[RMDB]
RNA sequence: GGGAACGACUCGAGUAGAGUCGAAAAGUAGUUGAUGAAGAGUGAGAGCAACAACAACAAAAAGAAAAGAUGUUCCAUUCUCACUAAUUCUCGAAAAGAAAGGAACACAUUCACUCAAGGAAGAAAAGUUGUUUUUAAUGUUCGCAUUAAGAGCAACAAAAGAAACAACAACAACAAC
Reactivity to 2A3 in 0.01 (KOAc 150mM, MgCl2 10mM, bicine 150mM(pH8.5), 24C), signal-to-noise 9, nucleotides 027 to 126: g110u140a010g000u010u040g050a130u080g040a110a120g020a020g020u020g000a060g020a010g100c030a030a040c000a010a000c010a010a030c050a020a180a080a040a030g220a060a110a020a010g150a180u040g000u010u000c000c000a020u050u010c020u010c010a040c010u010a030a040u080u040c060u030c050g080a040a050a050a050g030a030a030a020g010g000a010a010c020a010c000a050u040u030c000a010c010u040c030a040a050g120g030a070a050g050a050a070a010a010
Reactivity to DMS in 0.01 (KOAc 150mM, MgCl2 10mM, bicine 150mM(pH8.5), 24C), signal-to-noise 7, nucleotides 027 to 126: g000u000a090g010u010u000g000a100u020g000a090a100g000a040g000u000g000a070g000a070g020c160a060a060c130a070a060c130a070a090c160a050a070a070a090a100g010a090a050a080a090g020a160u000g000u000u000c000c000a160u010u000c010u010c090a100c090u000a060a120u020u020c060u000c060g010a030a090a100a030g000a010a040a050g010g020a010a000c010a000c050a070u010u010c010a020c050u000c030a090a090g010g020a080a060g000a040a030a050a080